[RMDB]
RNA sequence: GGGAACGACUCGAGUAGAGUCGAAAAGGACUGCGCAGUCCGGCAACAUCAGCAGAGAGCCCGCUAUACGUGACGGAUUGGCUGAAGCGUACAGUAAUAUUGAGCCUCCUGCAAGAGGCAGCCAAGCAAAACGUACGUGAGUUCGCUCACGUACGAAGAUGAAUAUGUCGUUCGCGACAUAUUCAUCAAAAGAAACAACAACAACAAC
Reactivity to 2A3 in 0.01 (KOAc 150mM, MgCl2 10mM, bicine 150mM(pH8.5), 24C), signal-to-noise 5, nucleotides 027 to 156: g010g000a020c020u060g030c180g020c140a030g040u000c010c000g020g020c010a060a050c010a100u120c030a010g020c040a010g070a000g010a010g110c020c010c040g000c030u040a040u010a090c060g040u050g040a010c030g050g030a100u060u070g050g000c010u050g020a060a010g010c010g030u030a020c020a040g030u070a040a170u080a130u230u170g040a020g000c000c000u010c010c030u070g060c050a060a040g000a000g020g010c000a000g000c000c000a010a020g020c040a040a060a030a040c010g000u000a000c000g000u010g000a000g010u050u130c210g020c060u000c010a000c000g000u000a000c000g000a000a000
Reactivity to DMS in 0.01 (KOAc 150mM, MgCl2 10mM, bicine 150mM(pH8.5), 24C), signal-to-noise 2, nucleotides 027 to 156: g020g020a030c000u000g030c080g010c070a130g000u010c010c030g060g050c030a050a080c060a120u010c030a220g010c020a120g010a110g020a080g030c030c000c000g010c040u000a120u010a040c050g000u000g020a270c020g050g010a210u000u000g010g040c010u010g000a070a300g030c030g020u000a060c060a040g000u000a070a160u000a170u000u010g000a130g010c020c010u000c020c030u010g020c090a080a080g030a050g020g020c020a060g000c040c000a050a070g040c070a030a030a070a210c020g000u000a000c010g020u010g010a010g020u000u010c300g010c010u000c000a010c000g000u000a000c010g000a020a080
Chemical mapping of a 207-nucleotide RNA with 2A3 and DMS. As a SHAPE reagent, 2A3 marks flexible, mostly unpaired nucleotides at the ribose 2'-OH. Values cover nucleotides 27 to 156. Conditions: 150 mM KOAc, 10 mM MgCl2 and 150 mM bicine (pH 8.5), 24 C.